An RNA of 207 nucleotides, treated with 2A3 and read out base by base. The data come from the RNA Mapping Database (RMDB), library RNAMAK. Reactivities are given for positions 27 through 156. Conditions: 150 mM KOAc, 10 mM MgCl2 and 150 mM bicine (pH 8.5), 24 C.

RNA sequence: GGGAACGACUCGAGUAGAGUCGAAAACCAGCGUUCGCGCUGGCAGCUGCGUACUACAGGACAUGCUCCGAAACGCUCGAUAAGUCCCAAAUAGGACUUUUGACGAGCGUGAUAGCUGAGCAACAGCCUGUAUCGCUAACGGGCGAUUCGUCGCCAAGCCUUGGAGUAACUUCGGUUACUCCAAGGCAAAAGAAACAACAACAACAAC
Reactivity to 2A3 in 0.01 (KOAc 150mM, MgCl2 10mM, bicine 150mM(pH8.5), 24C), signal-to-noise 1, nucleotides 027 to 156: c010c000a020g000c030g050u100u100c120g000c010g020c060u000g000g000c000a040g050c070u000g030c000g000u060a070c040u010a020c000a020g000g020a150c000a110u070g050c060u030c000c000g000a000a050a000c000g000c010u000c000g020a010u010a090a000g000u020c000c000c000a020a120a040u300a010g000g000a000c000u000u000u210u300g300a210c050g000a000g000c000g000u000g020a010u070a010g160c160u030g000a000g000c000a080a020c010a110g090c080c000u040g000u020a000u180c000g000c000u020a220a070c010g140g070g000c000g050a020u060u060c220g050u000c000g080c000c000a060a060